This 207-nucleotide RNA was probed chemically with 2A3.
RNA sequence: GGGAACGACUCGAGUAGAGUCGAAAAACUAAUCCAAAGCAAGUAUAGGAGAACAGGUUUUUAACUAUUUUUAGGCAGAUAAAAAAUAGUGUUUGACAGUCUAACACUAACUGAACAAUAAGUGUUAAAAAGUCGUCUCUGUUCGCAGAGACGACAACGAGUUCUACCUGUUCGCAGGUAGAACUCGAAAAGAAACAACAACAACAAC
Reactivity to 2A3 in 0.01 (KOAc 150mM, MgCl2 10mM, bicine 150mM(pH8.5), 24C), signal-to-noise 1, nucleotides 027 to 156: a040c030u050a070a030u000c000c000a040a020a030g010c020a000a030g000u060a050u120a180g020g020a020g000a060a080c140a250g100g000u020u000u000u000u040a010a010c010u010a020u000u010u000u010u030a040g050g040c070a020g110a180u170a080a060a010a010a000a000u020a000g000u000g030u020u020u100g030a010c000a000g000u000c000u000a000a000c000a000c000u010a000a000c000u000g020a040a000c010a010a020u020a010a010g000u000g000u020u010a020a050a000a020a010g000u000c000g010u000c000u010c000u000g080u090u030c200g000c080a000g000a000g000a020c000g000a000c000a000a020

For 2A3, 938 sequencing reads were counted. Conditions: 150 mM KOAc, 10 mM MgCl2 and 150 mM bicine (pH 8.5), 24 C.